An RNA of 207 nucleotides, treated with DMS and 2A3 and read out base by base. For 2A3, 1,641 sequencing reads were counted. Values cover nucleotides 27 to 156. The DMS profile rests on 2,833 reads.

[RMDB]
RNA sequence: GGGAACGACUCGAGUAGAGUCGAAAAGAGGCUAAUUUCACACUAGAAGGUUGUGAUGAAUUUAUAGUACCGCUCUGUGGUUUUAAUGGCCAUUCCAAGGGCAGCUCUUCGGAUGCUGCCAAUAAAUAUUAUACUGACUCUCAGAGUUACUAUAAUAACCGUAUCAUUUAUUCGUAAAUGAUACGGUAAAAGAAACAACAACAACAAC
Reactivity to DMS in 0.01 (KOAc 150mM, MgCl2 10mM, bicine 150mM(pH8.5), 24C), signal-to-noise 1, nucleotides 027 to 156: g020a080g020g000c020u010a050a050u000u000u000c010a070c000a090c080u000a110g030a120a150g030g000u000u020g030u000g010a100u000g030a110a130u000u000u000a040u000a090g020u000a060c040c000g030c010u010c020u010g020u010g020g030u000u000u000u000a090a290u000g020g040c000c010a080u000u000c040c060a100a090g030g000g000c030a030g020c030u000c040u000u000c210g040g010a080u000g000c000u000g020c020c010a030a020u000a040a080a110u000a040u000u000a030u000a080c090u010g010a030c010u010c030u000c060a160g020a020g010u000u000a000c040u000a000u000a030a010u030a130
Reactivity to 2A3 in 0.01 (KOAc 150mM, MgCl2 10mM, bicine 150mM(pH8.5), 24C), signal-to-noise 3, nucleotides 027 to 156: g090a050g020g000c040u060a050a120u090u160u130c040a060c000a000c050u100a090g080a230a030g140g030u060u050g010u050g030a150u030g010a020a130u020u090u040a030u030a010g020u010a040c110c010g040c060u020c010u030g060u050g000g030u010u060u050u140a100a090u110g040g000c030c020a040u120u000c020c010a010a020g040g000g010c020a020g010c020u000c000u040u070c070g080g000a030u070g020c030u040g000c030c000a000a000u010a000a000a000u070a000u030u050a010u030a030c070u010g030a000c010u010c000u010c160a010g010a000g000u040u010a000c000u000a010u010a030a030u030a020